[RMDB]
RNA sequence: GGGAACGACUCGAGUAGAGUCGAAAAGUCGAUCACCAUCGCCUUGUUGACCUUGUCCACGGGGGUCUUGCCGAGCUCGCUGGAGUCGAUGUGCGCGGCGGCCAUGCGCCGGUACUUGGCGAUGGUGCCCGGCUGCGGCUUCCGCAGCAGGUCGAUGGAGGUAAUGAAGGUUCGCCUUCAUUACCUCAAAAGAAACAACAACAACAAC
Reactivity to 2A3 in 0.01 (KOAc 150mM, MgCl2 10mM, bicine 150mM(pH8.5), 24C), signal-to-noise 3, nucleotides 027 to 156: g000u000c010g010a030u030c000a000c000c000a010u000c000g000c000c000u010u040g020u050u100g050a010c000c000u030u060g130u160c090c100a100c170g060g000g010g020g000u030c010u030u060g050c020c010g060a090g030c050u080c090g000c000u050g030g020a050g020u030c040g020a130u120g100u170g250c180g020c020g130g000c000g060g110c000c000a080u220g000c000g010c010c000g000g000u020a050c030u000u010g000g000c010g000a000u000g000g000u000g010c000c000c010g020g010c000u000g000c000g030g000c240u300u180c060c010g010c000a000g000c010a010g000g010u000c000g010a000u030g110
The data come from the RNA Mapping Database (RMDB), library OK3TST. Chemical mapping of a 207-nucleotide RNA with 2A3. 2A3 is a SHAPE reagent: it acylates the 2'-hydroxyl of flexible nucleotides of all four kinds. 2A3 adducts were read by reverse transcription with SuperScript II with manganese.